[RMDB]
Structure probing data (DMS and 2A3) for a 177-nucleotide construct. The RNA was probed in 150 mM KOAc, 10 mM MgCl2 and 150 mM bicine (pH 8.5) at 24 C. For 2A3 the reverse transcriptase was SuperScript II with manganese. DMS adducts were read by reverse transcription with MarathonRT. For 2A3, 2,189 sequencing reads were counted.

RNA sequence: GGGAACGACUCGAGUAGAGUCGAAAAACUGCAGUACGCUGCAGAUCAUGUGCGGCUGAUGACAGUGUUCCAGCUGAGGGUCUGUGAUUGCUCAGUCUCAAAGUAAACGCUCUGACGCACUGUGGAAGGUGCGUAAAGUCUUCGGACUUUACGCACCAAAAGAAACAACAACAACAAC
Reactivity to DMS in 0.01 (KOAc 150mM, MgCl2 10mM, bicine 150mM(pH8.5), 24C), signal-to-noise 2, nucleotides 027 to 126: a120c010u000g010c030a030g000u020a050c300g030c010u020g010c020a010g000a150u030c090a040u060g030u000g000c020g000g000c020u000g000a130u010g000a130c210a040g000u010g000u000u000c040c130a110g000c020u020g010a300g000g000g030u000c040u000g020u000g000a100u010u020g000c050u010c030a040g000u000c030u010c060a000a110a110g000u000a050a000a020c020g000c020u000c010u020g000a050c040g000c000a000c020u030g030u030g000g020a070a130
Reactivity to 2A3 in 0.01 (KOAc 150mM, MgCl2 10mM, bicine 150mM(pH8.5), 24C), signal-to-noise 4, nucleotides 027 to 126: a000c020u010g000c010a000g000u080a020c220g020c100u030g000c000a000g000a020u140c030a050u120g060u040g000c020g010g000c040u040g020a120u130g060a090c100a100g030u020g050u040u020c060c020a010g020c010u000g020a050g010g000g050u040c000u060g160u050g090a230u120u150g080c080u000c030a000g060u040c010u000c020a120a140a020g020u080a030a090a000c010g000c010u000c000u020g000a000c020g010c000a000c020u070g010u070g090g060a130a080